[RMDB]
RNA sequence: GGGAACGACUCGAGUAGAGUCGAAAAUGGAGCUUUACUGCAGCCUGUAGCUGUGACGCGAUUUUUAAUGCGUAGGGUAGGAAGGAGCCGUAGAUGUUUCGGUCGUGGCCAGAAUGGAGGCAACGAUCACUGUGAGGUGGUUCGCCACCUCACAGUGAAAAGAAACAACAACAACAAC
Reactivity to 2A3 in 0.01 (KOAc 150mM, MgCl2 10mM, bicine 150mM(pH8.5), 24C), signal-to-noise 3, nucleotides 027 to 126: u180g070g000a170g020c070u150u040u110a100c080u130g010c000a020g010c000c030u130g050u090a010g020c040u030g030u040g100a080c020g030c000g040a080u050u080u030u100u090a130a090u190g000c030g020u030a020g020g020g030u010a060g070g050a030a000g060g010a010g020c020c000g010u020a040g020a190u080g020u030u010u030c010g000g000u010c010g020u010g050g000c000c000a030g070a150a090u200g070g160a060g020g000c010a010a010c010g000a000u010
Reactivity to DMS in 0.01 (KOAc 150mM, MgCl2 10mM, bicine 150mM(pH8.5), 24C), signal-to-noise 2, nucleotides 027 to 126: u060g000g010a070g040c050u000u020u020a150c060u020g000c020a070g020c000c050u010g010u010a110g010c020u010g000u000g000a070c050g000c010g070a150u030u040u010u070u010a060a040u010g000c040g000u000a080g000g020g030u010a050g010g030a100a050g030g000a140g010c040c090g000u070a040g010a100u010g000u010u000u000c020g030g020u000c020g010u000g000g050c010c000a050g000a120a100u030g020g000a130g010g000c050a050a020c010g010a020u000